[RMDB]
RNA sequence: GGGAACGACUCGAGUAGAGUCGAAAAAUAAACCUUCCUUCCUUCCAAUAACUCUCUCUCUCUCAAUAAGGAAGGAAGGAGGAAGGAAUAAAGAGAGAGAGAGAGAGAAAAGCGGAAAGGCAAAAAAUCUGAUAUUACUGUUCGCAGUAAUAUCAGAAAAAGAAACAACAACAACAAC
Reactivity to DMS in 0.01 (KOAc 150mM, MgCl2 10mM, bicine 150mM(pH8.5), 24C), signal-to-noise 1, nucleotides 027 to 126: a170u000a070a070a180c060c010u000u020c010c000u010u000c000c020u000u010c020c000a280a160u000a110a120c030u000c010u000c010u000c000u000c010u000c000u050c000a080a240u040a080a040g010g030a030a030g000g000a010a000g000g000a000g000g000a130a060g030g010a130a190u010a060a110a160g000a040g030a010g000a000g000a010g000a000g000a040g020a170g000a120a040a100a070g010c040g030g020a030a010a050g050g000c070a010a010a080a060a070a120
Reactivity to 2A3 in 0.01 (KOAc 150mM, MgCl2 10mM, bicine 150mM(pH8.5), 24C), signal-to-noise 2, nucleotides 027 to 126: a000u120a010a040a060c000c000u020u020c000c000u010u010c000c000u020u000c010c000a060a210u210a300a280c010u000c010u010c000u020c000u000c000u000c000u020c040a130a240u140a180a050g030g000a000a000g010g000a000a000g000g000a000g010g010a040a020g050g020a050a020u290a170a160a060g080a000g000a000g000a000g000a000g000a000g000a000g000a000g020a000a120a050a010g030c020g090g090a110a000a000g110g000c050a000a050a000a000a000a070